[RMDB]
RNA sequence: GGGAACGACUCGAGUAGAGUCGAAAAUACAGGCAUGAGCCACCGCGCCCGUCCGCAAAGCAUAAUUAAUACAUUAAAUGGGGCAAAGGAAAAGAAUGCAUCUAAAACUGCUGUCUUCGUCUGGUGGUAAGGAAGGAACAAUGCACGACAGCCAUUAGCUGAGGACUAUGUUCGCAUAGUCCUCAGCAAAAGAAACAACAACAACAAC
Reactivity to 2A3 in 0.01 (KOAc 150mM, MgCl2 10mM, bicine 150mM(pH8.5), 24C), signal-to-noise 1, nucleotides 027 to 156: u100a020c030a020g020g040c020a040u060g030a080g000c040c000a010c020c010g010c010g030c000c000c000g030u110c100c000g040c070a040a060a130g050c010a000u050a140a000u140u150a100a190u050a140c100a090u080u180a040a120a070u140g000g000g000g040c050a070a000a000g030g020a090a140a000a040g070a060a080u030g000c040a030u000c030u180a090a060a100a130c050u010g000c010u010g030u030c020u050u000c040g100u040c090u100g040g000u000g010g000u060a010a060g080g000a060a030g000g000a040a010c050a110a000u050g020c020a030c050g080a010c020a010g020c000c040a150u180u060a000